Source: RMDB library M2PK50, as collected in RNAgym. Structure probing data (DMS and 2A3) for a 177-nucleotide construct. The RNA was probed in 150 mM KOAc, 10 mM MgCl2 and 150 mM bicine (pH 8.5) at 24 C. Values are in units of 0.01, from 0 to 300, in steps of 10. 2A3 adducts were read by reverse transcription with SuperScript II with manganese. The DMS profile rests on 3,252 reads. Reactivities are given for positions 27 through 126. DMS (dimethyl sulfate) methylates the pairing face of unpaired adenines and cytosines.
[RMDB]
RNA sequence: GGGAACGACUCGAGUAGAGUCGAAAAGUACUAGCGUUCGCGCUAGUACAAAGAAAGAAAGAUAGUCUGAGCGCACAGACUAGCGCAAAAGAAUGAAAGAAAAAAUCCCACUCUUCGGAGUGGGAAACAAUGCAUAGCAGUUCGCUGCUAUGCAUUGAAAAGAAACAACAACAACAAC
Reactivity to DMS in 0.01 (KOAc 150mM, MgCl2 10mM, bicine 150mM(pH8.5), 24C), signal-to-noise 4, nucleotides 027 to 126: g030u000a000c000u000a000g010c010g020u010u010c280g030c000g010c000u010a000g010u000a010c000a020a080a100g010a060a100a110g010a150a100a110g000a090u000a090g010u000c000u000g000a300g010c090g000c100a120c050a070g000a070c120u010a020g010c060g000c090a040a060a100a050g000a070a040u000g010a080a100a120g010a010a020a060a060a110a110u000c000c000c000a010c000u000c000u000u030c230g000g000a020g010u010g000g000g000a000a010a060
Reactivity to 2A3 in 0.01 (KOAc 150mM, MgCl2 10mM, bicine 150mM(pH8.5), 24C), signal-to-noise 2, nucleotides 027 to 126: g000u000a000c010u000a010g000c030g020u070u080c200g020c010g020c130u010a000g000u000a000c010a020a000a000g060a010a020a000g130a000a150a010g090a030u090a050g000u020c010u000g040a050g120c020g000c030a020c020a150g090a050c090u030a030g000c080g000c010a030a020a050a150g080a050a040u200g040a160a110a100g180a000a130a020a010a020a000u040c020c000c000a000c010u000c000u010u040c230g100g010a000g000u040g000g000g000a000a000a000